[RMDB]
RNA sequence: GGGAACGACUCGAGUAGAGUCGAAAAGGCCGAAACGUCGUUGCCCUGCGUUUCGAUGACCGGCAGAGCCGUCAGCGAGCCAGCGCCGUUUUCGUCGUUGAGCUUUGCAGCGCGUUCGAGAAGACGAAGGAGCAUACUACUUCGGUAGUAUGCUCCUAAAAGAAACAACAACAACAAC
Reactivity to DMS in 0.01 (KOAc 150mM, MgCl2 10mM, bicine 150mM(pH8.5), 24C), signal-to-noise 3, nucleotides 027 to 126: g030g020c040c020g010a060a040a050c020g010u020c120g010u000u000g010c050c050c070u010g030c050g020u000u000u010c010g000a090u000g020a100c110c040g020g030c070a170g000a100g010c020c020g010u000c050a130g000c010g010a040g010c030c010a030g000c040g000c080c020g010u000u010u020u010c080g000u000c000g000u000u000g010a160g010c000u000u010u010g030c050a150g000c020g010c110g010u000u000c010g010a130g000a100a060g000a090c130g000a170
Reactivity to 2A3 in 0.01 (KOAc 150mM, MgCl2 10mM, bicine 150mM(pH8.5), 24C), signal-to-noise 1, nucleotides 027 to 126: g070g000c000c000g000a050a020a020c020g020u050c020g040u090u120g070c000c000c020u040g000c000g000u000u020u030c060g030a100u140g150a100c000c000g000g050c030a020g040a030g000c000c000g050u080c010a020g030c000g030a010g020c010c010a010g050c000g000c010c020g050u080u060u120u220c020g000u020c000g000u000u030g030a040g060c010u060u070u250g000c000a020g000c030g080c080g010u030u020c060g000a070g010a050a050g050a040c070g050a070